[RMDB]
RNA sequence: GGGAACGACUCGAGUAGAGUCGAAAAGAUAUGGAGCAAUGGGACGCACAGACUAUGUGUAGGAUUAACCUCGGAAACGAGGUUAAUCCUACACACGAAUCUGUGACCCGUUAGUUGCUCCUAAGUCGAUUGCUAGAGAGUUCGCUCUCUAGCAAUCAAAAGAAACAACAACAACAAC
Reactivity to DMS in 0.01 (KOAc 150mM, MgCl2 10mM, bicine 150mM(pH8.5), 24C), signal-to-noise 1, nucleotides 027 to 126: g010a070u000a300u030g000g000a000g020c010a020a020u000g000g000g010a100c070g010c000a000c000a010g030a010c080u000a240u000g000u010g050u000a000g010g010a020u000u010a000a010c000c000u000c010g000g000a120a100a280c020g000a000g020g000u000u000a000a000u000c000c000u010a000c000a000c010a000c090g010a050a080u010c000u000g020u000g000a060c020c070c010g020u000u020a180g010u000u000g010c010u010c000c000u000a010a040g010u020c120